[RMDB]
RNA sequence: GGGAACGACUCGAGUAGAGUCGAAAACUUGUACCAUAUGCAUCAUUUUAUAACUCGUAAAUAAGACUAAACAUUUUGAUGACGUUAUAGUCGUAUAUUCAAUAAUAUAGCUUACAAUCGAUGCUACCGUACUAUGCGUUUUCGAACGCAUAGUACGAAAAGAAACAACAACAACAAC
Reactivity to 2A3 in 0.01 (KOAc 150mM, MgCl2 10mM, bicine 150mM(pH8.5), 24C), signal-to-noise 4, nucleotides 027 to 126: c020u030u120g030u090a090c010c030a040u080a010u250g000c000a020u010c000a000u010u010u070u190a220u040a100a100c050u050c090g030u030a010a070a090u080a070a020g070a060c030u030a000a080a040c040a080u050u080u070u230g170a110u160g020a020c030g010u040u110a210u050a190g040u050c000g010u040a030u020a030u070u080c030a020a020u050a190a060u110a040u020a060g020c000u030u030a030c100a050a100u080c070g000a010u000g020c010u020a040c030
Reactivity to DMS in 0.01 (KOAc 150mM, MgCl2 10mM, bicine 150mM(pH8.5), 24C), signal-to-noise 3, nucleotides 027 to 126: c160u000u010g020u020a300c070c060a130u000a080u010g000c000a030u030c010a060u000u010u000u010a070u010a040a080c070u010c160g030u000a020a060a080u000a060a060g000a040c040u000a010a060a050c110a150u000u000u020u010g000a070u030g010a030c090g010u000u000a130u010a040g010u000c030g000u000a010u000a080u000u010c040a050a070u010a070a040u010a120u000a030g010c080u010u000a050c100a140a050u010c100g040a030u000g000c010u010a070c180
Chemical mapping of a 177-nucleotide RNA with 2A3 and DMS. The RNA was probed in 150 mM KOAc, 10 mM MgCl2 and 150 mM bicine (pH 8.5) at 24 C. Values cover nucleotides 27 to 126. Source: RMDB library OK2TRN, as collected in RNAgym. For DMS the reverse transcriptase was MarathonRT.